[RMDB]
The record gives the reactivity of an RNA of 177 nucleotides to DMS and 2A3. The reactions ran in a buffer of 150 mM KOAc, 10 mM MgCl2 and 150 mM bicine (pH 8.5), at 24 C.
RNA sequence: GGGAACGACUCGAGUAGAGUCGAAAAGAUAUGGACCUAAGGUUCUAUGAAAGCGAAGAACUCGGAAACGAGGGAGCUUUCAAUAAUGAACCUAGGUCCUAAGUCAAAACCUUGGUUCGCCAAGGAACAUCCCAAAUGUCUUCGGACAUUUGGGAUGAAAAGAAACAACAACAACAAC
Reactivity to DMS in 0.01 (KOAc 150mM, MgCl2 10mM, bicine 150mM(pH8.5), 24C), signal-to-noise 1, nucleotides 027 to 126: g020a010u000a300u000g000g000a010c000c000u000a020a110g000g000u000u010c000u020a050u000g000a000a000a000g000c030g000a130a130g000a130a300c000u010c020g000g000a120a030a050c000g020a050g000g040g010a060g020c000u000u000u000c000a010a080u020a120a080u000g000a000a000c000c000u000a030g000g000u000c000c000u000a000a030g010u020c020a210a110a120a070c000c040u030u000g000g000u000u000c270g010c000c010a010a010g000g000a070a160
Reactivity to 2A3 in 0.01 (KOAc 150mM, MgCl2 10mM, bicine 150mM(pH8.5), 24C), signal-to-noise 1, nucleotides 027 to 126: g010a010u030a030u090g010g000a010c000c000u100a300a140g000g000u010u020c040u050a110u170g020a020a000a020g000c000g210a290a060g040a180a210c000u000c000g010g000a040a030a030c000g010a010g000g020g000a040g000c000u030u010u010c000a000a050u190a030a010u090g000a000a010c000c000u010a000g050g010u000c000c000u010a010a010g010u020c030a000a050a110a160c000c000u010u010g050g000u060u050c300g080c050c010a030a000g000g000a000a060
DMS adducts were read by reverse transcription with MarathonRT.
The 2A3 profile rests on 1,117 reads.
The DMS profile rests on 694 reads.